[RMDB]
Conditions: 150 mM KOAc, 10 mM MgCl2 and 150 mM bicine (pH 8.5), 24 C. Chemical mapping of a 177-nucleotide RNA with 2A3 and DMS.
RNA sequence: GGGAACGACUCGAGUAGAGUCGAAAAUGCACGUGGGCCCGCGGUCGAGCCCUAAGGCCGGGCGUGGGGCUGGGGUCGCAGGGAGAGUAACCGUGAGCCGGCGCCCAGCCUUCAGGGCGCUCCCUCGGCUAACGAUGUUAUUCGUAACAUCGUUAGCAAAAGAAACAACAACAACAAC
Reactivity to 2A3 in 0.01 (KOAc 150mM, MgCl2 10mM, bicine 150mM(pH8.5), 24C), signal-to-noise 8, nucleotides 027 to 126: u120g020c020a020c060g020u070g010g040g030c000c000c020g020c020g000g040u070c040g040a040g010c000c000c000u010a020a010g010g000c010c000g000g000g020c010g000u050g010g300g010g000c010u050g040g040g000g030u060c050g030c080a100g050g110g020a080g010a020g050u070a040a050c020c030g110u100g100a020g010c000c000g010g000c010g060c000c010c000a000g000c000c000u010u010c030a010g000g000g000c000g010c000u020c000c000c000u050c030g030
Reactivity to DMS in 0.01 (KOAc 150mM, MgCl2 10mM, bicine 150mM(pH8.5), 24C), signal-to-noise 2, nucleotides 027 to 126: u010g010c030a030c040g010u020g000g030g020c000c000c000g030c030g000g000u020c060g000a110g010c000c000c000u010a050a050g010g020c000c040g010g000g000c010g020u000g010g030g020g030c010u010g020g000g000g010u000c030g020c030a070g030g000g010a140g000a150g000u020a090a060c010c020g010u020g040a070g000c020c020g010g000c010g000c000c000c000a070g000c000c030u000u000c080a020g010g000g030c000g000c080u000c010c000c000u000c110g000
For 2A3 the reverse transcriptase was SuperScript II with manganese. High 2A3 reactivity points to a flexible backbone, as in loops and unpaired stretches. Reactivities are given for positions 27 through 126.